This 177-nucleotide RNA was probed chemically with DMS and 2A3. Conditions: 150 mM KOAc, 10 mM MgCl2 and 150 mM bicine (pH 8.5), 24 C. Source: RMDB libraries RFM100 and RFMREP, as collected in RNAgym. 2A3 adducts were read by reverse transcription with SuperScript II with manganese.
RNA sequence: GGGAACGACUCGAGUAGAGUCGAAAAACCUUCUUGUAUAAGCACUGUGCUAAAAUUGCAGACACUAGGACCAUGUCUUGGUUUUUGCAAUAAUGCUAGCAGAGUACACACAAGAAGAAAAGUAACAAGUUGUAUAAACGUUCGCGUUUAUACAACUAAAAGAAACAACAACAACAAC
Reactivity to DMS in 0.01 (KOAc 150mM, MgCl2 10mM, bicine 150mM(pH8.5), 24C), signal-to-noise 4, nucleotides 027 to 126: a100c090c010u000u000c000u000u000g000u000a100u020a130a160g000c060a010c000u010g000u000g010c000u000a010a060a080a060u000u000g000c000a000g010a020c030a020c000u000a000g010g000a010c010c200a190u020g010u010c000u010u000g010g010u000u000u000u000u000g000c000a010a010u000a050a110u050g020c250u000a000g000c000a020g010a000g010u000a040c040a080c200a010c000a010a010g010a010a000g000a050a040a080a100g000u030a080a090c260a110
Reactivity to 2A3 in 0.01 (KOAc 150mM, MgCl2 10mM, bicine 150mM(pH8.5), 24C), signal-to-noise 9, nucleotides 027 to 126: a000c000c000u000u000c010u000u020g030u010a100u030a200a070g070c030a010c010u040g030u030g250c000u050a060a060a040a040u000u000g000c000a010g000a000c000a000c020u000a000g010g010a000c040c100a240u300g000u010c000u010u000g000g000u000u010u000u010u000g000c000a010a010u050a080a070u150g100c070u030a000g000c000a000g010a000g080u030a020c030a000c000a000c000a030a000g010a010a000g030a000a110a010a000g110u130a040a060c100a120